[RMDB]
RNA sequence: GGGAACGACUCGAGUAGAGUCGAAAAACGUGCGCUAGCACGCCACCGAGUCACACAUGAAACACUACCCGUCAGUGACUGUGACCCUCACUCCGGGAGGAGGACACCGGUAGCCGGGCAGUUUGACCAUUUUAGUAGAUUUCGAUCUACUAAAAUGAAAAGAAACAACAACAACAAC
Reactivity to 2A3 in 0.01 (KOAc 150mM, MgCl2 10mM, bicine 150mM(pH8.5), 24C), signal-to-noise 9, nucleotides 027 to 126: a000c020g010u020g000c030g030c140u100a060g010c010a000c010g010c000c000a030c010c010g040a030g020u030c010a010c010a010c020a120u160g130a070a100a020c050a020c040u080a080c010c000c010g040u060c050a040g010u010g080a030c020u020g020u030g040a060c010c020c000u040c020a160c030u010c030c060g090g030g010a030g020g020a040g010g030a030c020a010c030c020g010g010u020a020g040c030c000g000g010g000c010a020g000u030u070u120g060a040c030
Reactivity to DMS in 0.01 (KOAc 150mM, MgCl2 10mM, bicine 150mM(pH8.5), 24C), signal-to-noise 9, nucleotides 027 to 126: a200c030g010u000g000c010g020c230u050a120g000c010a020c010g010c060c030a120c040c020g010a090g010u000c020a050c050a090c140a120u030g000a120a090a090c070a050c040u010a090c020c010c030g010u010c040a070g020u010g000a060c070u010g010u000g000a120c040c030c030u000c050a100c030u010c040c050g010g020g010a120g000g000a050g000g010a100c080a060c070c050g000g010u010a090g010c050c030g000g000g010c130a050g010u000u010u010g010a180c140